[RMDB]
RNA sequence: GGGAACGACUCGAGUAGAGUCGAAAAGGGGGACUCCGGAACUCCCUGCAGGCUGGGGACGAAGCCCCCACCGGGCGCUCCCCUCGGCGGGCCGUCCAUUGGGUUCACACCCCCAGGCCGCGGGCCGUGUUGGAAAAGUUCGCUUUUCCAAAAAGAAACAACAACAACAAC
Reactivity to 2A3 in 0.01 (KOAc 150mM, MgCl2 10mM, bicine 150mM(pH8.5), 24C), signal-to-noise 9, nucleotides 027 to 129: g010g010g000g000g010a010c020u010c020c000g010g020a040a030c040u050c000c010c020u040g020c050a110g050g010c020u030g000g000g000g000a010c030g050a060a020g030c020c010c000c010c000a020c010c020g000g010g000c040g010c040u090c010c010c010c010u050c030g130g000c090g010g010g000c010c010g000u010c010c000a070u060u110g000g000g000u120u110c040a040c000a020c060c010c000c000c000a010g070g070c010c010g030c020g000g000g000c010c020g070u080g060u070
Reactivity to DMS in 0.01 (KOAc 150mM, MgCl2 10mM, bicine 150mM(pH8.5), 24C), signal-to-noise 9, nucleotides 027 to 129: g030g010g020g000g010a080c000u010c020c010g010g000a010a100c070u030c130c010c000u000g040c070a060g020g030c040u020g010g040g020g000a040c010g000a100a140g020c080c030c020c040c090a060c140c100g010g000g010c070g000c100u020c010c010c010c020u030c050g040g050c120g000g000g000c300c020g030u040c010c010a140u000u000g000g010g000u050u050c170a130c200a170c100c030c010c030c020a080g040g000c040c040g010c080g000g000g000c070c030g040u000g020u020
An RNA of 170 nucleotides, treated with 2A3 and DMS and read out base by base. High DMS reactivity at an A or C suggests that its Watson-Crick edge is free. DMS adducts were read by reverse transcription with MarathonRT. Source: RMDB library 15KLIB, as collected in RNAgym.